[RMDB]
RNA sequence: GGGAACGACUCGAGUAGAGUCGAAAAGCAUUAUUCUCACACAGCUUCAAGUCUCCAUUCGUAACCUAAGAGAAAGAAUUCAAUGCCAGUGUAGAGUGAGUUUGGUCAAGAGGAAGGAGAGUCAUACCACAUCAUAUCGAUUCGUCGAUAUGAUGUGAAAAGAAACAACAACAACAAC
Reactivity to 2A3 in 0.01 (KOAc 150mM, MgCl2 10mM, bicine 150mM(pH8.5), 24C), signal-to-noise 8, nucleotides 027 to 126: g020c010a020u050u060a070u190u070c020u020c010a030c000a000c000a040g040c020u070u060c040a080a070g040u000c000u000c020c010a050u070u060c050g070u060a070a090c010c020u060a120a020g070a010g040a130a060a030g080a060a060u130u080c050a040a060u100g040c020c020a050g030u050g060u170a080g030a030g070u050g010a040g020u050u090u090g050g010u040c040a050a020g020a010g110g010a060a020g050g020a030g000a010g020u030c010a030u060a120c040
Reactivity to DMS in 0.01 (KOAc 150mM, MgCl2 10mM, bicine 150mM(pH8.5), 24C), signal-to-noise 9, nucleotides 027 to 126: g010c070a080u000u010a110u000u000c020u000c030a110c120a100c120a100g010c040u000u000c070a100a150g010u000c020u010c020c040a100u000u000c070g000u010a110a100c070c030u010a070a110g000a100g010a050a070a090g010a070a080u010u000c090a060a070u000g010c030c040a060g020u000g010u000a070g010a070g020u000g000a050g000u010u000u000g010g010u000c060a040a080g010a090g000g010a080a060g010g000a070g010a070g010u000c060a070u010a130c170
The record gives the reactivity of an RNA of 177 nucleotides to 2A3 and DMS. The data come from the RNA Mapping Database (RMDB), library OK2TRN. 2A3 adducts were read by reverse transcription with SuperScript II with manganese. The 2A3 profile rests on 14,824 reads.